RNA sequence: GGGAACGACUCGAGUAGAGUCGAAAAUGAAAGCUGAUGACAUUAUAACUUUACGUGUUAAAGGUUAUAUAUUCCAUUACUUAGAUGAAUCAAAUGAAUACAUUGAAGAAUUUAUACCACUUCACGACAAUCCAGCAAGAUUCGUCUUGCUGGAUUGAAAAGAAACAACAACAACAAC
Reactivity to DMS in 0.01 (KOAc 150mM, MgCl2 10mM, bicine 150mM(pH8.5), 24C), signal-to-noise 2, nucleotides 027 to 126: u000g030a150a030a040g010c170u000g010a090u000g010a050c030a080u000u000a020u000a020a010c020u000u000u000a030c070g010u000g010u010u000a050a050a000g010g010u000u000a000u000a020u010a250u000u000c060c020a040u010u000a060c030u000u000a050g000a090u000g000a210a060u030c100a080a060a070u000g010a070a060u010a190c090a050u010u000g000a060a060g010a120a010u000u010u000a040u000a200c080c100a050c150u000u000c030a060c170g010a270
Reactivity to 2A3 in 0.01 (KOAc 150mM, MgCl2 10mM, bicine 150mM(pH8.5), 24C), signal-to-noise 2, nucleotides 027 to 126: u090g020a000a000a000g000c080u000g030a000u030g020a050c060a060u040u030a110u020a070a020c000u000u020u100a030c070g170u140g020u230u090a000a010a070g010g020u020u030a020u000a010u030a010u060u060c020c000a040u030u030a150c020u060u110a030g050a140u020g110a080a140u020c040a170a020a110u150g030a140a040u030a100c030a020u000u230g010a030a020g020a010a000u100u080u050a080u120a030c020c020a030c040u000u040c030a030c070g030a020